Chemical mapping of a 177-nucleotide RNA with DMS and 2A3. For DMS the reverse transcriptase was MarathonRT. For 2A3 the reverse transcriptase was SuperScript II with manganese.

RNA sequence: GGGAACGACUCGAGUAGAGUCGAAAAAGAAAAGCGGAGGAGGGUUAUGGAUUGCGCUAAGACCGCCCGCGCGUGGUGUGGGCUGGAAUUCGUGAAUGGAGGAUAAUUAAUGCCGCGCGCCCAAAAAUCUUGUAUUGAUGUUCGCAUCAAUACAAGAAAAAGAAACAACAACAACAAC
Reactivity to DMS in 0.01 (KOAc 150mM, MgCl2 10mM, bicine 150mM(pH8.5), 24C), signal-to-noise 3, nucleotides 027 to 126: a110g010a110a090a070a100g010c140g020g000a040g010g000a110g010g010g000u000u010a050u010g000g010a090u000u000g010c040g020c100u020a040a040g010a180c050c020g010c020c010c020g010c030g030c080g040u010g000g020u010g040u000g010g020g030c040u030g020g010a090a060u000u000c060g020u000g010a060a100u010g000g000a080g020g010a110u000a030a120u010u000a070a070u020g010c000c020g000c050g010c110g010c020c080c050a000a060a030a060a090
Reactivity to 2A3 in 0.01 (KOAc 150mM, MgCl2 10mM, bicine 150mM(pH8.5), 24C), signal-to-noise 1, nucleotides 027 to 126: a000g050a040a050a010a040g040c040g020g070a040g070g030a040g050g050g020u050u080a020u180g010g000a060u040u130g050c020g000c050u040a000a040g060a020c000c010g000c000c000c010g020c010g000c050g050u070g030g110u080g020u040g020g030g070c020u120g060g010a070a030u060u060c040g020u090g060a090a080u100g000g040a050g020g000a000u010a060a080u180u040a080a000u090g000c040c000g000c000g070c010g020c030c020c010a100a110a020a000a010
Reactivities are given for positions 27 through 126.